[RMDB]
RNA sequence: GGGAACGACUCGAGUAGAGUCGAAAAUCCCUACUGGCGCCGACGCCACAAUCUUGCGGUUGAAUUGCUCAUUCUCUUCCAACUGGAACGCAUUCACUUCCGCAGGCAACAGCAUUUUCCGCUCAAAUCUCAAAAUAACGUUCGCGUUAUUUUGAGAAAAAGAAACAACAACAACAAC
Reactivity to DMS in 0.01 (KOAc 150mM, MgCl2 10mM, bicine 150mM(pH8.5), 24C), signal-to-noise 2, nucleotides 027 to 126: u010c010c000c020u010a090c200u010g010g000c020g010c130c220g010a080c070g020c040c030a090c230a030a110u000c030u010u010g000c030g020g000u020u000g000a050a030u000u010g010c020u000c140a260u010u020c050u020c190u020u000c110c070a130a110c190u000g010g020a010a060c180g000c010a010u010u000c100a030c280u000u000c000c000g000c010a040g000g010c220a040a060c050a080g000c060a070u000u000u000u010c020c030g030c100u000c150a010a170a150
Reactivity to 2A3 in 0.01 (KOAc 150mM, MgCl2 10mM, bicine 150mM(pH8.5), 24C), signal-to-noise 2, nucleotides 027 to 126: u010c010c000c000u020a050c030u000g010g020c030g030c100c200g190a180c050g010c000c010a000c000a030a070u050c000u030u030g000c040g030g000u000u000g030a070a040u120u140g030c000u010c050a090u140u000c090u050c000u210u010c070c050a150a220c120u100g040g020a020a020c030g000c000a010u040u000c020a020c060u100u040c020c000g000c000a000g000g000c010a050a030c010a060g020c010a000u070u080u090u010c000c010g040c070u070c070a090a180a130
Conditions: 150 mM KOAc, 10 mM MgCl2 and 150 mM bicine (pH 8.5), 24 C. An RNA of 177 nucleotides, treated with DMS and 2A3 and read out base by base. For DMS, 887 sequencing reads were counted. The 2A3 profile rests on 1,695 reads. The data come from the RNA Mapping Database (RMDB), library RFMREP. Values are in units of 0.01, from 0 to 300, in steps of 10.